[RMDB]
RNA sequence: GGGAACGACUCGAGUAGAGUCGAAAACCGGUAGUUGGGUUAACACCGUCACUGUUGAUUGCGUUGAAGUGAGCAGAAACUUUGGUCACAGCUACUGGGCAAUCCACGACAGAAAUAGUGAAGUUUGGAUGUACCGCGUAUUCGUACGCGGUACAUCAAAAGAAACAACAACAACAAC
Reactivity to DMS in 0.01 (KOAc 150mM, MgCl2 10mM, bicine 150mM(pH8.5), 24C), signal-to-noise 1, nucleotides 027 to 126: c020c000g000g030u000a040g010u010u000g010g000g010u000u020a080a090c060a080c040c050g000u010c060a080c100u010g040u000u000g000a100u020u000g020c100g010u010u020g040a060a030g040u000g030a060g000c070a070g000a100a110a090c100u030u000u010g030g000u010c000a110c030a030g000c000u000a040c030u010g000g020g000c090a050a060u000c000c150a040c120g000a110c110a090g010a060a070a080u020a060g010u010g000a120a070g000u000u000u000g000
Structure probing data (DMS) for a 177-nucleotide construct.
It was measured as part of the RMDB library OK2TRN.
DMS adducts were read by reverse transcription with MarathonRT.
The reactions ran in a buffer of 150 mM KOAc, 10 mM MgCl2 and 150 mM bicine (pH 8.5), at 24 C.
Reactivities are given for positions 27 through 126.
High DMS reactivity at an A or C suggests that its Watson-Crick edge is free.
The DMS profile rests on 1,046 reads.